[RMDB]
RNA sequence: GGGAACGACUCGAGUAGAGUCGAAAACCUCUUGCUCUCAGUAACAAGGAUUCAUCCUGUUGUGGUACUCAAAUCCAACAGGGAAUCUCUGUUACUGGGGUUAAGGUUAAAGGAGUCUUCGGACUCCCGUAACGCAUAUCUUCGGAUAUGCGUUACGAAAAGAAACAACAACAACAAC
Reactivity to DMS in 0.01 (KOAc 150mM, MgCl2 10mM, bicine 150mM(pH8.5), 24C), signal-to-noise 2, nucleotides 027 to 126: c000c000u000c030u000u000g020c020u010c000u000c000a020g020u000a020a010c000a030a040g000g000a010u000u000c020a130u010c010c000u000g010u000u000g020u020g040g020u000a060c300u020c300a070a080a020u010c000c010a010a010c000a000g020g000g000a000a010u000c000u000c040u000g000u000u000a000c000u010g000g010g000g000u000u000a030a000g000g020u000u010a060a100a110g000g000a030g000u000c000u000u000c190g010g010a000c000u010c000c000
Reactivity to 2A3 in 0.01 (KOAc 150mM, MgCl2 10mM, bicine 150mM(pH8.5), 24C), signal-to-noise 2, nucleotides 027 to 126: c000c000u020c020u000u030g000c010u000c010u000c030a010g000u000a010a020c020a040a040g010g020a010u010u000c030a170u100c050c020u010g000u010u030g050u270g000g030u070a090c050u060c300a140a190a110u060c000c010a000a000c000a000g000g000g000a010a000u000c020u010c000u030g000u000u000a000c000u000g000g010g000g000u020u170a010a010g000g010u030u150a080a060a030g010g000a000g000u000c010u050u090c300g140g000a000c010u000c000c010
This 177-nucleotide RNA was probed chemically with DMS and 2A3.
For DMS the reverse transcriptase was MarathonRT.
Source: RMDB library RFMREP, as collected in RNAgym.